[RMDB]
RNA sequence: GGGAACGACUCGAGUAGAGUCGAAAAAAAAGCAGCUGGAAAUGGACAACCACAAUAUGCAUAAAUCUAACUCCUACCAUCAGCUACACACUGCUUGACAUAUAUUGUUAGAAGCACCUCGCAUUUGCUUAUCGUAACACUUCGGUGUUACGAUAAGAAAAGAAACAACAACAACAAC
Reactivity to DMS in 0.01 (KOAc 150mM, MgCl2 10mM, bicine 150mM(pH8.5), 24C), signal-to-noise 1, nucleotides 027 to 126: a000a060a080a110g000c010a000g000c030u000g000g000a000a070a070u000g010g000a110c060a040a110c020c030a100c040a020a030u000a080u000g020c070a040u010a040a040a020u020c120u010a050a090c100u000c040c010u000a040c080c050a060u000c040a050g000c020u000a110c070a140c110a040c120u000g050c040u000u000g000a070c080a030u000a060u000a100u030u000g020u000u020a070g020a040a030g000c000a070c110c040u000c060g000c150a110u000u000u050g000
Reactivity to 2A3 in 0.01 (KOAc 150mM, MgCl2 10mM, bicine 150mM(pH8.5), 24C), signal-to-noise 2, nucleotides 027 to 126: a000a000a000a000g050c040a000g000c040u000g000g020a030a070a030u090g030g000a030c020a000a030c050c050a020c030a050a060u100a050u160g000c060a040u130a130a070a030u050c030u050a000a050c030u030c020c000u000a110c010c000a030u060c000a030g000c040u080a000c080a000c000a000c050u000g010c010u050u070g030a000c020a000u150a010u030a040u130u120g060u040u050a070g030a100a000g030c010a010c010c020u050c070g090c030a130u060u060u150g000